[RMDB]
RNA sequence: GGGAACGACUCGAGUAGAGUCGAAAACGGUGAUAUCGGAGCACAUGACCUGGGGCGAUAGCCUGGUACUCAAUGAGCAACUGCUACUGGCUCUCGAGAUGUGUAACCAGGAUAAAGCGGCGAUAAGGCGAAUUGAAGAACAGAAAAAUGAUAGCCAAUAUGGAACAAAGUUCGCUUUGUUCCAUAUAAAAGAAACAACAACAACAAC
Reactivity to DMS in 0.01 (KOAc 150mM, MgCl2 10mM, bicine 150mM(pH8.5), 24C), signal-to-noise 2, nucleotides 027 to 156: c050g020g040u090g050a120u000a070u010c050g000g010a280g010c080a070c040a070u000g020a110c000c030u000g010g010g030g040c040g000a080u010a100g030c010c020u000g000g010u000a140c030u010c000a050a170u000g010a040g020c000a050a100c050u020g020c040u010a070c090u010g080g010c000u000c030u000c070g020a150g010a080u000g030u010g040u010a090a130c010c000a050g000g000a070u010a040a070a130g010c060g050g000c020g020a080u020a050a050g000g000c000g030a080a090u000u000g010a050a110g000a060a180c040a080g010a000a060a060a050a120u000g020a090u000a100g020c010c040a070
Reactivity to 2A3 in 0.01 (KOAc 150mM, MgCl2 10mM, bicine 150mM(pH8.5), 24C), signal-to-noise 4, nucleotides 027 to 156: c040g010g020u020g030a070u060a040u100c050g020g000a040g010c020a020c020a100u080g050a060c000c040u040g000g000g040g000c050g080a100u050a040g040c000c020u020g000g000u020a040c010u010c060a050a080u140g010a010g010c000a040a100c070u110g050c020u070a070c060u070g130g000c020u010c010u000c040g070a130g010a130u140g060u020g020u100a090a080c000c000a010g000g010a010u080a050a120a000g040c020g000g000c020g020a020u010a150a070g020g000c000g010a040a030u080u080g050a100a050g020a050a030c040a050g150a070a050a040a000a000u110g040a050u050a040g030c030c000a010